RNA sequence: GGGAACGACUCGAGUAGAGUCGAAAAAAGCGAUACUGCUGCUUACGAGAAACAAGGGAUGCUGCGCACGCUGAUUAAAGUCACGUUCGGUUAUCCUGCGAUUUUUGACGAGGUUCGGCAGGAAUGCGAUACUUUAAUAGUUCGCUAUUAAAGUAUCAAAAGAAACAACAACAACAAC
Reactivity to 2A3 in 0.01 (KOAc 150mM, MgCl2 10mM, bicine 150mM(pH8.5), 24C), signal-to-noise 9, nucleotides 027 to 126: a000a000g120c100g010a120u130a140c010u020g010c000u010g000c010u020u020a030c020g010a010g010a040a030a010c010a020a020g020g000g000a000u010g000c030u040g020c050g020c050a010c020g020c120u010g010a050u060u270a200a080a010g020u010c010a000c030g010u020u030c010g000g010u040u110a020u030c000c000u010g000c020g070a100u010u020u010u020u050g100a060c030g010a010g040g020u180u240c050g030g020c000a000g020g020a030a020u060g020c040
Reactivity to DMS in 0.01 (KOAc 150mM, MgCl2 10mM, bicine 150mM(pH8.5), 24C), signal-to-noise 9, nucleotides 027 to 126: a070a070g010c030g020a090u010a190c020u000g010c010u000g010c020u000u000a060c030g000a250g000a020a020a020c040a060a300g000g000g010a020u000g010c040u000g010c300g020c130a030c040g020c160u000g000a040u000u010a070a070a120g010u000c020a020c030g000u000u000c020g010g000u000u010a040u000c000c000u000g000c300g000a060u000u000u000u010u000g000a120c090g000a070g000g000u000u010c100g010g010c000a020g000g010a060a070u010g010c090

Source: RMDB library RFMREP, as collected in RNAgym. An RNA of 177 nucleotides, treated with 2A3 and DMS and read out base by base. 2A3 adducts were read by reverse transcription with SuperScript II with manganese. Conditions: 150 mM KOAc, 10 mM MgCl2 and 150 mM bicine (pH 8.5), 24 C.